[RMDB]
RNA sequence: GGGAACGACUCGAGUAGAGUCGAAAAAGCGGAGUUUUAAACUUUAAAUAGACAGGUCUGAGUGCCUGAAUUUGCCUUUUCAUUUUACUUCAUCCUCCAAGGAGUUCAAUCACCUGGCGUGACUUCAACAGAUAUUCAUGUUCGCAUGAAUAUCUGUAAAAGAAACAACAACAACAAC
Reactivity to 2A3 in 0.01 (KOAc 150mM, MgCl2 10mM, bicine 150mM(pH8.5), 24C), signal-to-noise 1, nucleotides 027 to 126: a000g060c070g050g080a060g020u130u140u160u280a280a140a000c000u070u020u240a080a110a080u100a070g050a060c010a000g080g020u000c020u200g180a020g040u190g000c000c000u000g030a020a040u050u040u040g020c000c000u050u050u000u080c040a060u000u130u010u040a060c020u050u080c020a070u030c050c010u010c000c000a010a000g000g040a030g020u000u060c010a070a070u030c000a020c020c030u020g050g010c060g030u000g010a000c010u050u000c050a020
Reactivity to DMS in 0.01 (KOAc 150mM, MgCl2 10mM, bicine 150mM(pH8.5), 24C), signal-to-noise 2, nucleotides 027 to 126: a080g000c060g010g010a020g000u000u000u010u000a120a120a100c030u000u000u000a070a080a060u010a070g000a300c030a010g010g020u010c000u030g030a090g020u020g000c000c010u000g000a050a070u000u000u000g010c020c020u000u000u000u000c050a070u010u010u000u020a010c010u010u000c090a060u000c010c010u010c060c050a050a070g000g030a050g010u000u000c070a070a140u000c060a100c050c050u000g030g010c140g010u000g000a080c100u010u000c110a100